[RMDB]
RNA sequence: GGGAACGACUCGAGUAGAGUCGAAAAUUGCUAACGAGGACGCUGUACACAACAUCGCUAAUGAGGACACCAUAUAAGACAUCACCAAUGAGGAUGCUGUAUAUGACAUCGCUAAUGGCAUCCACAAGGCAUGCUAACGAGGACGCUGUAGACGACAACCAUGCAGGGGAUUCGUCCCCUGCAUGGUAAAAGAAACAACAACAACAAC
Reactivity to 2A3 in 0.01 (KOAc 150mM, MgCl2 10mM, bicine 150mM(pH8.5), 24C), signal-to-noise 1, nucleotides 027 to 156: u090u030g000c010u000a020a070c150g020a110g070g130a000c020g060c070u090g050u180a170c210a000c000a000a090c000a050u020c000g020c030u050a000a160u110g000a000g020g000a000c010a030c000c030a080u020a000u000a060a020g020a010c000a000u000c000a080c010c180a050a280u050g000a050g000g000a000u000g010c000u000g020u000a140u000a000u300g050a100c060a070u060c130g030c220u260a040a040u110g000g000c000a000u000c000c000a000c000a060a000g030g000c000a000u030g030c000u050a030a050c020g070a030g000g100a010c050g010c070u080g070u220a050g050a100c090g000a000c090a000
An RNA of 207 nucleotides, treated with 2A3 and read out base by base. The 2A3 profile rests on 344 reads. 2A3 adducts were read by reverse transcription with SuperScript II with manganese.